[RMDB]
RNA sequence: GGGAACGACUCGAGUAGAGUCGAAAAGGAGUGGAGUAGUGCCUGCCCGGCUCAACAGAGACACUACAGGUCCAAUAGCGCGCACUGUGUCAGAUGUGGCGCGCCUGUUUGAGGUCGUGGUCGGGCACUUGUGUCGCACGUUCGCGUGCGACACAAGAAAAGAAACAACAACAACAAC
Reactivity to DMS in 0.01 (KOAc 150mM, MgCl2 10mM, bicine 150mM(pH8.5), 24C), signal-to-noise 2, nucleotides 027 to 126: g000g020a010g020u000g020g010a180g030u000a060g020u010g020c010c010u010g000c010c000c030g000g040c010u000c010a020a030c020a020g000a180g010a050c020a080c110u010a120c210a130g020g000u010c010c050a110a140u020a110g000c000g020c010g010c000a040c060u010g000u020g000u000c240a090g000a100u010g000u000g000g040c000g020c000g000c000c000u000g000u010u000u000g020a040g030g020u010c000g000u000g010g010u000c050g030g000g000c020a000
Reactivity to 2A3 in 0.01 (KOAc 150mM, MgCl2 10mM, bicine 150mM(pH8.5), 24C), signal-to-noise 1, nucleotides 027 to 126: g000g010a100g070u110g040g030a080g100u230a010g020u010g060c010c010u020g000c000c040c000g020g000c000u000c010a000a060c000a050g050a010g000a020c020a020c140u250a060c080a070g000g160u000c010c030a250a300u070a170g020c010g000c010g050c000a010c030u040g020u090g170u300c050a030g010a300u120g030u080g210g040c010g000c000g010c010c000u040g010u050u160u000g030a040g010g060u090c000g030u130g040g010u200c090g000g000g000c010a000